[RMDB]
RNA sequence: GGGAACGACUCGAGUAGAGUCGAAAAGCCGAGCAGGCGGCCAAAAUCGCGGAGCUCGAAGCCGAGAGAGAAAGCGCGCGGCGUGGCGCGCUGGCCGAGCUGACGGCGUGCCGAGACGCCGGGCUGCAAACGAGAUACAGUUCGCUGUAUCUCGUUUAAAAGAAACAACAACAACAAC
Reactivity to DMS in 0.01 (KOAc 150mM, MgCl2 10mM, bicine 150mM(pH8.5), 24C), signal-to-noise 4, nucleotides 027 to 126: g020c080c010g010a050g010c040a160g010g020c000g010g010c060c120a100a090a110a090u010c030g010c020g030g010a160g020c010u000c050g010a110a150g020c010c020g000a150g010a130g000a130g010a070a120a100g010c010g020c010g000c000g010g010c060g020u010g010g010c000g020c010g000c000u000g000g010c030c040g010a100g010c120u010g010a070c010g010g000c010g020u000g000c020c010g000a140g000a060c030g020c000c000g010g000g000c000u000g020c050
Reactivity to 2A3 in 0.01 (KOAc 150mM, MgCl2 10mM, bicine 150mM(pH8.5), 24C), signal-to-noise 1, nucleotides 027 to 126: g030c040c000g010a020g000c040a030g030g110c000g000g000c030c080a040a070a010a020u070c030g000c030g150g100a040g010c010u010c030g060a060a000g060c020c070g050a080g000a000g000a000g030a140a230a040g060c010g000c020g000c000g040g040c060g020u030g030g000c000g010c000g020c000u000g000g000c090c030g070a110g050c070u070g040a010c010g000g000c000g000u030g020c030c020g070a100g010a030c000g020c000c010g050g070g020c030u070g030c020